RNA sequence: GGGAACGACUCGAGUAGAGUCGAAAAGAUAUGGACACACUAUCGCUUCACGCAGAUAUCGGAAACGAUGUAGUGAAGAACUACGAUCCCUGUGUCCUAAGUCAAAACAGUUCGUUCGCGAACUGAAGGAUCUGUGACUGUUCGCAGUCACAGAUCCAAAAGAAACAACAACAACAAC
Reactivity to 2A3 in 0.01 (KOAc 150mM, MgCl2 10mM, bicine 150mM(pH8.5), 24C), signal-to-noise 1, nucleotides 027 to 126: g030a050u080a000u130g020g000a020c010a000c000a030c130u200a040u020c020g010c070u020u000c000a080c080g040c040a040g080a300u130a030u180c030g000g030a030a010a100c030g000a010u040g000u090a150g020u020g010a000a030g000a010a020c110u300a040c120g000a010u000c020c000c000u000g000u000g000u000c020c000u020a140a010g010u000c040a000a010a080a110c000a000g000u000u000c000g030u110u170c300g000c000g130a000a030c020u000g020a050a090
Reactivity to DMS in 0.01 (KOAc 150mM, MgCl2 10mM, bicine 150mM(pH8.5), 24C), signal-to-noise 1, nucleotides 027 to 126: g000a000u000a300u000g000g000a030c000a010c030a010c060u010a270u000c000g000c000u010u000c000a040c010g000c230a190g010a000u000a000u000c020g000g000a120a050a090c000g020a000u000g060u000a020g030u000g000a000a000g000a200a010c170u010a210c040g000a010u000c030c050c020u000g010u000g010u000c000c020u000a010a120g000u000c040a120a070a070a060c000a000g030u000u000c000g000u000u000c300g010c000g000a040a000c000u000g000a170a270
Chemical mapping of a 177-nucleotide RNA with 2A3 and DMS. It was measured as part of the RMDB library TTRDEL. DMS adducts were read by reverse transcription with MarathonRT. High 2A3 reactivity points to a flexible backbone, as in loops and unpaired stretches. For 2A3, 1,443 sequencing reads were counted. For 2A3 the reverse transcriptase was SuperScript II with manganese.